[RMDB]
RNA sequence: GGGAACGACUCGAGUAGAGUCGAAAAUCACUGCAAAAGUAAUGGCCUUGUGUUGCCUUCAAAAAGACUCUGGAGAUCCUGUUUCUGUGUCCACAUUUUUUGUAACACCACCCUAACUUCUGGAUCAACCCCAUAUAUUAUUCGUAAUAUAUGGGGUAAAAGAAACAACAACAACAAC
Reactivity to 2A3 in 0.01 (KOAc 150mM, MgCl2 10mM, bicine 150mM(pH8.5), 24C), signal-to-noise 4, nucleotides 027 to 126: u030c010a010c050u050g030c050a080a070a030a090g050u150a030a120u110g020g010c000c020u100u090g030u030g060u120u060g030c000c000u050u070c050a080a100a020a000a010g020a020c020u010c030u080g040g020a050g000a060u010c020c020u020g050u020u020u010c030u020g040u010g040u030c020c010a010c000a060u060u090u060u030u060u080g040u050a030a000c010a010c030c020a040c000c010c010u020a050a090c030u060u030c010u100g030g050a010u300c010a000
Reactivity to DMS in 0.01 (KOAc 150mM, MgCl2 10mM, bicine 150mM(pH8.5), 24C), signal-to-noise 7, nucleotides 027 to 126: u000c070a080c050u010g010c130a060a070a100a060g010u000a070a060u000g010g010c030c040u000u000g020u000g010u000u000g010c030c040u000u000c070a040a080a080a110a110g010a050c030u000c040u010g010g000a110g000a060u000c040c050u000g000u000u000u000c020u010g030u000g000u000c030c050a050c060a030u000u000u010u010u010u000g010u000a070a060c060a050c030c070a090c040c020c020u000a070a080c120u000u000c040u000g010g010a140u000c150a110
Chemical mapping of a 177-nucleotide RNA with 2A3 and DMS. It was measured as part of the RMDB library OK2TST. For DMS, 10,048 sequencing reads were counted. The 2A3 profile rests on 4,580 reads. For DMS the reverse transcriptase was MarathonRT.